[RMDB]
RNA sequence: GGGAACGACUCGAGUAGAGUCGAAAAAAGGACUGGUUCGCCAGUCCUUAUUCAUUCGUACGCAACGAAGCGUAAGUCAUUACGCUAAUGACUAAAAGCGUAUACGAAAGGACUUCGGUCCUUUCAAACUCUCCUAAAGUUUCGACUUUAGGAGAGUAAAAGAAACAACAACAACAAC
Reactivity to 2A3 in 0.01 (KOAc 150mM, MgCl2 10mM, bicine 150mM(pH8.5), 24C), signal-to-noise 2, nucleotides 027 to 126: a010a010g000g000a010c000u000g000g030u030u050c100g030c040c010a000g010u000c000c000u010u000a000u000u020c010a000u020u020c030g030u010a010c000g000c040a110a040c060g120a070a020g000c000g010u000a010a030g130u120c090a210u030u040a000c020g000c020u050a070a110u150g090a080c060u120a020a050a040a030g000c010g010u020a030u010a030c080g010a010a000a000g000g000a000c000u030u070c190g080g000u000c000c000u000u000u000c010a000a010
Reactivity to DMS in 0.01 (KOAc 150mM, MgCl2 10mM, bicine 150mM(pH8.5), 24C), signal-to-noise 6, nucleotides 027 to 126: a040a000g000g000a010c000u000g010g010u000u010c180g030c010c000a000g000u000c010c000u000u000a000u000u000c070a110u010u000c120g020u000a000c000g010c010a100a120c130g010a190a040g010c010g010u000a010a020g000u010c300a080u000u000a010c020g000c020u000a080a110u000g000a110c190u010a040a050a070a130g000c010g010u000a020u000a100c210g000a010a000a000g010g000a010c000u000u010c150g030g000u000c000c000u000u000u000c000a090a100
An RNA of 177 nucleotides, treated with 2A3 and DMS and read out base by base. High DMS reactivity at an A or C suggests that its Watson-Crick edge is free. For DMS the reverse transcriptase was MarathonRT. For 2A3 the reverse transcriptase was SuperScript II with manganese.